[RMDB]
RNA sequence: GGGAACGACUCGAGUAGAGUCGAAAACGGCAGAUAGUUAGUACAGCCUGAUUUCUCAUUGGCUUUCUGCAUGAUUUCCAGCGUUUCCACGCUGACCGCUUCAGCGGUGUCGUUAAACUGUACGCCGGUGGAUCAAUCGUUUCGACGAUUGAUCCACAAAAGAAACAACAACAACAAC
Reactivity to DMS in 0.01 (KOAc 150mM, MgCl2 10mM, bicine 150mM(pH8.5), 24C), signal-to-noise 3, nucleotides 027 to 126: c110g010g010c010a030g000a020u000a020g000u010u010a110g010u000a020c030a030g020c300c030u000g010a090u000u000u010c110u000c030a160u000u000g000g000c020u000u000u010c040u010g000c000a050u000g000a110u000u000u010c120c030a080g000c010g000u000u010u010c130c150a100c030g000c030u000g010a070c020c030g000c040u020u010c280a100g000c030g010g010u000g010u010c040g020u010u010a030a040a080c020u000g000u000a010c030g030c180c180g000
Reactivity to 2A3 in 0.01 (KOAc 150mM, MgCl2 10mM, bicine 150mM(pH8.5), 24C), signal-to-noise 3, nucleotides 027 to 126: c020g030g010c010a000g000a060u050a010g070u150u070a060g020u060a010c010a010g030c000c010u060g050a120u030u190u010c090u020c030a060u050u140g010g000c000u010u030u000c000u000g010c010a060u110g030a120u070u120u040c060c010a020g000c010g000u020u220u090c080c040a010c020g000c010u010g060a010c000c010g060c040u290u210c130a070g000c020g010g000u010g010u000c010g000u010u060a060a050a020c030u020g030u060a000c040g020c030c020g170
This 177-nucleotide RNA was probed chemically with DMS and 2A3.
The RNA was probed in 150 mM KOAc, 10 mM MgCl2 and 150 mM bicine (pH 8.5) at 24 C.
The DMS profile rests on 2,218 reads.
Reactivities are given for positions 27 through 126.